[RMDB]
An RNA of 177 nucleotides, treated with DMS and 2A3 and read out base by base.
RNA sequence: GGGAACGACUCGAGUAGAGUCGAAAACGGACGGGAUUUUAGCCCGGUUGCACGUUUACCCAUUUCGUGCUGGGUCCUGGACCCAGUUAAGAUAAUAGAAAUAUUAUCGAUUUCUUUACCGUCCGGAAAUUAUACUAUAGUUCGCUAUAGUAUAAUUAAAAGAAACAACAACAACAAC
Reactivity to DMS in 0.01 (KOAc 150mM, MgCl2 10mM, bicine 150mM(pH8.5), 24C), signal-to-noise 6, nucleotides 027 to 126: c010g010g010a060c000g000g010g010a140u010u010u010u010a140g020c020c020c040g010g010u010u000g010c040a090c020g010u010u000u000a190c070c050c060a150u000u010u010c110g020u000g010c000u000g000g000g010u000c010c170u000g030g000a050c000c000c010a030g010u000u000a070a180g000a010u000a010a010u000a020g010a210a090a160u000a010u000u000a010u000c000g010a200u000u000u000c030u010u000u000a200c020c010g000u000c050c020g000g010a110
Reactivity to 2A3 in 0.01 (KOAc 150mM, MgCl2 10mM, bicine 150mM(pH8.5), 24C), signal-to-noise 2, nucleotides 027 to 126: c020g000g030a010c020g020g000g080a100u080u090u140u300a050g080c020c000c010g020g020u000u110g040c040a010c070g000u030u040u110a140c000c010c010a030u100u120u120c140g020u070g020c030u010g010g030g000u050c060c200u160g140g030a020c000c000c020a000g000u000u030a020a020g000a000u010a020a000u000a010g010a010a050a010u020a010u020u020a030u010c000g000a000u020u100u000c040u070u130u080a090c020c000g020u010c020c020g000g000a030

2A3 is a SHAPE reagent: it acylates the 2'-hydroxyl of flexible nucleotides of all four kinds. For DMS, 7,415 sequencing reads were counted. The RNA was probed in 150 mM KOAc, 10 mM MgCl2 and 150 mM bicine (pH 8.5) at 24 C. Values cover nucleotides 27 to 126.